[RMDB]
RNA sequence: GGGAACGACUCGAGUAGAGUCGAAAAAAAUUAUAUACAUGGCUUCUUGUGGUUAGAAUAAGAUACCCAUAUUGUCCUUGCCGUAGCCUUUUGUGAUGACGGCUUCUGAAGAGGUCUACAAGAAAGGCCUUUAAUGAAUCUUCGGAUUCAUUAAAGGAAAAGAAACAACAACAACAAC
Reactivity to DMS in 0.01 (KOAc 150mM, MgCl2 10mM, bicine 150mM(pH8.5), 24C), signal-to-noise 2, nucleotides 027 to 126: a090a110a070u030u020a110u020a220u010a180c020a100u000g000g010c040u000u000c020u000u000g010u000g010g000u000u020a060g000a120a030u000a080a030g000a090u010a090c100c000c020a120u000a050u000u000g010u000c010c000u000u000g020c250c060g000u010a070g010c000c010u000u000u000u000g030u000g000a180u000g010a080c180g010g010c000u000u000c060u000g010a050a160g000a030g010g000u010c020u000a100c090a060a160g010a040a030a080g010g000